[RMDB]
This 170-nucleotide RNA was probed chemically with DMS and 2A3. For 2A3, 2,787 sequencing reads were counted. It was measured as part of the RMDB library 15KLIB. High 2A3 reactivity points to a flexible backbone, as in loops and unpaired stretches. DMS adducts were read by reverse transcription with MarathonRT. Values cover nucleotides 27 to 129. 2A3 adducts were read by reverse transcription with SuperScript II with manganese. The reactions ran in a buffer of 150 mM KOAc, 10 mM MgCl2 and 150 mM bicine (pH 8.5), at 24 C.
RNA sequence: GGGAACGACUCGAGUAGAGUCGAAAAAAGAGGGCGAAUUUCCUCGGGAGGAUCCCCCAAGCUUCCAACAGGCAAGCAACAAGAUAGAGGAGCCCCCAUGACGCUGGAACCGUCCCGGAAGUGGGAGAUACGAAGGCGUUCGCGCCUUCGAAAAGAAACAACAACAACAAC
Reactivity to DMS in 0.01 (KOAc 150mM, MgCl2 10mM, bicine 150mM(pH8.5), 24C), signal-to-noise 4, nucleotides 027 to 129: a000a000g080a000g000g000g080c120g020a120a020u040u000u030c040c010u010c110g050g040g010a040g010g010a040u070c050c030c040c030c000a090a200g000c040u030u010c030c050a120a090c220a170g040g000c230a030a020g080c140a200a020c130a030a160g030a060u040a090g020a100g040g000a080g040c050c040c020c010c020a080u050g000a070c000g030c010u020g030g000a060a040c080c000g000u060c000c020c000g010g040a050a050g020u060g010g000g000a050g040a060u030a080
Reactivity to 2A3 in 0.01 (KOAc 150mM, MgCl2 10mM, bicine 150mM(pH8.5), 24C), signal-to-noise 2, nucleotides 027 to 129: a000a000g050a010g010g040g040c050g060a030a050u070u060u160c010c000u000c060g000g000g000a000g030g040a040u010c010c010c000c000c010a020a020g000c030u000u020c000c010a060a040c000a100g040g000c060a030a020g030c010a000a030c060a050a010g100a030u200a050g040a010g060g000a020g010c000c000c000c020c000a070u050g000a000c060g010c070u040g020g010a020a140c000c000g070u020c000c000c000g030g000a050a000g080u220g000g000g000a030g000a040u090a090